Record summary: This 207-nucleotide RNA was probed chemically with 2A3. Conditions: 150 mM KOAc, 10 mM MgCl2 and 150 mM bicine (pH 8.5), 24 C. The data come from the RNA Mapping Database (RMDB), library OK3TST. 2A3 adducts were read by reverse transcription with SuperScript II with manganese. The 2A3 profile rests on 1,140 reads.

RNA sequence: GGGAACGACUCGAGUAGAGUCGAAAACAGGAUGGUGCUGACUGGACAGUGGAGAGCCUUUAGGAGAUGGAGCCUUCGCAAGGGAUUAUGGGAAUUUACUCUCCACACUCUGCUACAUCCUGGCUCCCAUGAAGCUCCUCUGGACGGCAGCAUCACAUAUCGGAUGAUACUUCGGUAUCAUCCGAUAAAAAGAAACAACAACAACAAC
Reactivity to 2A3 in 0.01 (KOAc 150mM, MgCl2 10mM, bicine 150mM(pH8.5), 24C), signal-to-noise 3, nucleotides 027 to 156: c050a010g150g050a190u010g070g040u010g010c010u020g090a300c010u010g000g020a010c000a000g050u060g010g030a100g000a060g060c050c010u090u100u040a150g020g070a190g000a150u140g050g000a010g030c010c010u060u090c070g030c100a050a130g010g010g010a010u170u200a050u300g010g010g040a010a010u130u130u150a200c040u110c020u020c040c010a020c000a020c050u040c000u020g060c010u070a040c010a140u130c020c040u010g010g000c000u000c040c030c000a010u110g000a010a010g010c000u000c000c000u010c010u030g020g000a000c000g030g000c010a010g020c000a000u010c000a000c010a010